Chemical mapping of a 207-nucleotide RNA with 2A3. It was measured as part of the RMDB library OK3TST. Values are in units of 0.01, from 0 to 300, in steps of 10.
RNA sequence: GGGAACGACUCGAGUAGAGUCGAAAACUCACUGGUGUGCUAGGUGCCCAGCACAGAGUAGGUGCUCUGUAAAUGCUUACCCAGCGCACAGUAGGUGCUCUGUAAACACCCAGCGCACAGUGGUGCUCUGUAAACGCUUAUCCAGCACACAGUAGGACCAUCGUGACUGAUUCGUCAGUCACGAUGGAAAAGAAACAACAACAACAAC
Reactivity to 2A3 in 0.01 (KOAc 150mM, MgCl2 10mM, bicine 150mM(pH8.5), 24C), signal-to-noise 2, nucleotides 027 to 156: c030u070c020a010c000u070g250g040u030g030u030g030c000u040a070g000g000u010g010c080c050c050a030g030c040a000c010a020g040a020g020u060a110g030g180u250g090c060u050c000u010g040u080a000a190a000u160g020c070u110u010a100c010c000c080a000g030c000g000c000a020c010a040g190u100a090g100g130u010g010c000u010c000u010g010u050a010a130a000c020a020c020c010c010a000g000c010g050c000a000c000a030g040u090g070g050u020g040c030u040c010u130g040u120a020a130a030c130g040c000u180u040a050u200c030c040a000g000c020a020c000a000c020a010g180u170a060g050g060a040